RNA sequence: GGGAACGACUCGAGUAGAGUCGAAAAUGAGAAUGACUAUAUCCUUGUUAACAGGAGGUGGGAGCAGGGCACGGUAGCUCACACCUGUAAUCUUGGCACUUUAGGAGGCUGAGGCGGGCCGAUCACCUCGUCCUUGUUUCUUCGGAAACAAGGACGAAAAAGAAACAACAACAACAAC
Reactivity to DMS in 0.01 (KOAc 150mM, MgCl2 10mM, bicine 150mM(pH8.5), 24C), signal-to-noise 1, nucleotides 027 to 126: u000g020a100g030a060a130u020g000a070c030u070a040u040a160u050c050c000u020u000g020u020u060a160a190c170a020g020g000a100g000g040u000g000g010g000a050g000c030a030g000g000g010c000a080c050g030g000u000a110g000c040u000c000a070c090a060c000c000u000g000u000a000a000u010c040u000u050g000g000c070a100c040u020u000u030a100g000g000a130g000g110c010u000g000a110g000g050c050g020g000g010c000c000g040a000u000c170a040c030c070
Reactivity to 2A3 in 0.01 (KOAc 150mM, MgCl2 10mM, bicine 150mM(pH8.5), 24C), signal-to-noise 2, nucleotides 027 to 126: u180g020a020g070a060a010u130g010a030c080u060a080u080a120u300c000c000u000u070g050u170u110a160a040c000a000g040g130a030g090g000u060g020g010g000a040g000c060a010g010g110g000c030a000c230g020g030u030a050g020c000u000c070a050c040a020c020c000u060g060u020a000a020u000c010u000u030g000g070c010a010c010u070u040u090a080g030g000a020g040g000c030u060g000a070g020g000c000g000g000g010c000c000g000a070u010c000a020c000c000

Notes: The record gives the reactivity of an RNA of 177 nucleotides to DMS and 2A3. High DMS reactivity at an A or C suggests that its Watson-Crick edge is free. For 2A3, 664 sequencing reads were counted. The data come from the RNA Mapping Database (RMDB), library OK1LIB. The DMS profile rests on 1,414 reads.